[RMDB]
Chemical mapping of a 207-nucleotide RNA with 2A3 and DMS. The 2A3 profile rests on 6,025 reads. It was measured as part of the RMDB library OK3TST. The reactions ran in a buffer of 150 mM KOAc, 10 mM MgCl2 and 150 mM bicine (pH 8.5), at 24 C. For 2A3 the reverse transcriptase was SuperScript II with manganese.

RNA sequence: GGGAACGACUCGAGUAGAGUCGAAAACAGGCAUUCCAGGGUCUGGGCUUCAGCGCCCCAGAGCAUGAACACCAGGUGCUCACGGCACUCUGACAGCCUGGAGAUGACUCGCUCGCUCAACACUUGCCAGCCCAAGUGGCGGUGCGAGCCUGGCUGGGCAUCUAAUUUUGUUCGCAAAAUUAGAUGCAAAAGAAACAACAACAACAAC
Reactivity to 2A3 in 0.01 (KOAc 150mM, MgCl2 10mM, bicine 150mM(pH8.5), 24C), signal-to-noise 5, nucleotides 027 to 156: c020a010g060g000c010a070u120u050c020c000a020g020g000g030u000c010u030g010g000g000c000u120u100c070a030g020c020g010c060c000c010c020a020g000a010g010c040a050u110g080a140a030c050a070c090c020a020g030g030u010g000c010u030c060a060c080g070g000c040a010c040u210c010u020g030a040c070a020g000c000c000u010g020g010a030g020a080u110g060a080c010u000c030g000c000u000c000g030c010u060c050a090a140c020a030c030u000u030g020c040c070a090g020c070c030c010a010a010g030u030g020g020c040g040g040u100g010c010g000a000g000c000c020u040g020g000c010u020g000g040
Reactivity to DMS in 0.01 (KOAc 150mM, MgCl2 10mM, bicine 150mM(pH8.5), 24C), signal-to-noise 2, nucleotides 027 to 156: c070a090g000g010c030a070u000u000c030c020a090g050g010g020u000c030u000g000g000g020c030u000u000c110a080g000c110g020c140c000c050c050a100g010a050g020c040a070u000g020a110a070c100a110c120c080a140g010g010u000g000c000u010c050a140c110g000g030c050a060c020u000c030u000g020a100c050a090g000c020c000u000g010g010a060g010a110u000g010a070c010u010c020g000c020u000c020g010c220u010c020a030a060c040a020c010u000u010g020c020c000a300g020c020c050c020a020a060g010u010g000g010c030g000g020u000g010c030g010a040g000c000c030u000g000g010c000u000g020g010